[RMDB]
RNA sequence: GGGAACGACUCGAGUAGAGUCGAAAAGAAGAGAAGCGCGCGAAUUGGAAACCAGCGAACCCUAUUACGCGCGCAAGGAACCGGGCCUUGGUUCGUUGGAAAGAUUAGAUAAUUUCGCUGGUAAAGACAUUUAUUAAUCCUUCGGGAUUAAUAAAUGAAAAGAAACAACAACAACAAC
Reactivity to DMS in 0.01 (KOAc 150mM, MgCl2 10mM, bicine 150mM(pH8.5), 24C), signal-to-noise 4, nucleotides 027 to 126: g020a180a190g010a230g020a150a210g000c010g000c000g010c020g010a080a050u030u000g000g000a150a120a070c000c000a000g010c000g010a030a070c150c020c050u010a030u000u020a130c010g020c010g010c030g000c000a010a010g020g000a050a040c030c000g000g010g000c040c050u010u010g010g000u000u000c060g010u020u000g010g000a060a050a060g000a080u030u010a070g000a070u030a070a070u010u010u010c000g000c010u010g000g010u030a050a060a110g010a240
Reactivity to 2A3 in 0.01 (KOAc 150mM, MgCl2 10mM, bicine 150mM(pH8.5), 24C), signal-to-noise 6, nucleotides 027 to 126: g050a070a010g060a000g020a150a060g030c000g000c000g000c010g020a020a040u040u030g040g010a070a090a080c000c000a000g010c010g000a030a050c030c000c010u020a040u030u090a070c010g000c000g000c000g000c000a000a020g080g000a000a020c020c020g060g170g030c020c060u080u120g030g000u020u020c040g030u070u100g040g040a090a090a010g070a040u120u200a040g110a150u170a140a100u070u060u020c000g000c000u000g000g000u020a000a020a000g060a000
Background
This 177-nucleotide RNA was probed chemically with DMS and 2A3. 2A3 adducts were read by reverse transcription with SuperScript II with manganese. For 2A3, 4,694 sequencing reads were counted. In probing experiments dimethyl sulfate is read out at A N1 and C N3, which are open when not base-paired. Reactivities are rounded to 0.1 and cut off at 0 and 3. Conditions: 150 mM KOAc, 10 mM MgCl2 and 150 mM bicine (pH 8.5), 24 C.